[RMDB]
RNA sequence: GGGAACGACUCGAGUAGAGUCGAAAAGAAAGAGUCCAGUUUGCGGCGGACCAAAGCCAAAAGCCUGUGAAGGCGAUUGCGACAGCCGGCCACAUGCGGGUUACGAGGCCCAUGAGGCCGGCUGUAAUAAGAACUUAUGGUUCGCCAUAAGUUCUUAAAAAGAAACAACAACAACAAC
Reactivity to DMS in 0.01 (KOAc 150mM, MgCl2 10mM, bicine 150mM(pH8.5), 24C), signal-to-noise 8, nucleotides 027 to 126: g000a090a090a100g000a140g000u010c020c020a100g010u010u010u010g010c090g020g020c030g000g000a080c030c050a070a090a120g000c070c030a030a060a100a300g010c000c000u000g000u050g000a190a020g000g010c010g000a190u010u000g010c070g000a070c000a000g010c000c010g000g000c000c000a060c010a010u000g010c150g010g010g000u010u020a120c170g020a140g000g010c000c000c000a020u000g000a050g000g010c000c010g000g000c000u000g000u000a010a060
Reactivity to 2A3 in 0.01 (KOAc 150mM, MgCl2 10mM, bicine 150mM(pH8.5), 24C), signal-to-noise 2, nucleotides 027 to 126: g080a020a110a000g060a000g020u010c010c020a030g030u040u110u120g080c100g020g000c000g010g010a050c040c040a070a070a000g010c010c000a030a050a010a020g000c000c000u030g040u060g110a060a020g010g010c030g010a050u000u170g010c010g010a020c010a000g000c020c000g000g000c020c000a030c010a020u040g060c160g050g010g000u050u020a120c150g030a080g070g140c000c000c000a000u000g010a030g010g020c000c010g000g000c000u000g000u000a000a000

The record gives the reactivity of an RNA of 177 nucleotides to DMS and 2A3. For DMS the reverse transcriptase was MarathonRT. 2A3 adducts were read by reverse transcription with SuperScript II with manganese. The reactions ran in a buffer of 150 mM KOAc, 10 mM MgCl2 and 150 mM bicine (pH 8.5), at 24 C.